[RMDB]
This 177-nucleotide RNA was probed chemically with DMS and 2A3. Reactivities are given for positions 27 through 126. The reactions ran in a buffer of 150 mM KOAc, 10 mM MgCl2 and 150 mM bicine (pH 8.5), at 24 C. DMS (dimethyl sulfate) methylates the pairing face of unpaired adenines and cytosines. Source: RMDB library TTRDEL, as collected in RNAgym. The 2A3 profile rests on 100,094 reads.
RNA sequence: GGGAACGACUCGAGUAGAGUCGAAAAGAUAUGGAGUGGUGUGGGAGAGCUCUAAUCGGAAACGAUUAGGUGCUCGACGAUCACACGUAACAUCUCCUAAGUCAAAACAACUCGUUCGCGAGUUGAACGAUAUACAUUAGUUCGCUAAUGUAUAUCGAAAAGAAACAACAACAACAAC
Reactivity to DMS in 0.01 (KOAc 150mM, MgCl2 10mM, bicine 150mM(pH8.5), 24C), signal-to-noise 9, nucleotides 027 to 126: g010a010u000a010u010g000g000a020g030u000g020g010u000g010u000g000g010g010a010g010a020g020c000u000c000u000a000a000u000c000g010g000a010a010a020c000g010a010u000u000a000g000g010u010g010c000u000c000g000a050c230g000a030u000c010a000c000a000c010g020u000a130a210c270a130u010c000u000c000c000u000a000a110g000u000c000a080a060a110a220c020a010a010c000u000c000g020u000u010c220g020c010g010a010g000u000u000g000a070a170
Reactivity to 2A3 in 0.01 (KOAc 150mM, MgCl2 10mM, bicine 150mM(pH8.5), 24C), signal-to-noise 9, nucleotides 027 to 126: g010a000u020a000u050g010g000a010g010u110g010g000u000g040u010g010g000g000a020g000a000g000c000u000c000u010a010a000u000c000g000g000a010a000a000c010g000a000u010u000a010g080g050u140g010c000u000c000g080a110c000g000a010u000c000a000c010a000c010g050u100a150a050c030a150u080c000u000c010c000u000a000a000g010u000c000a010a070a040a110c010a010a000c010u000c010g050u110u070c300g020c020g130a020g010u000u010g020a070a020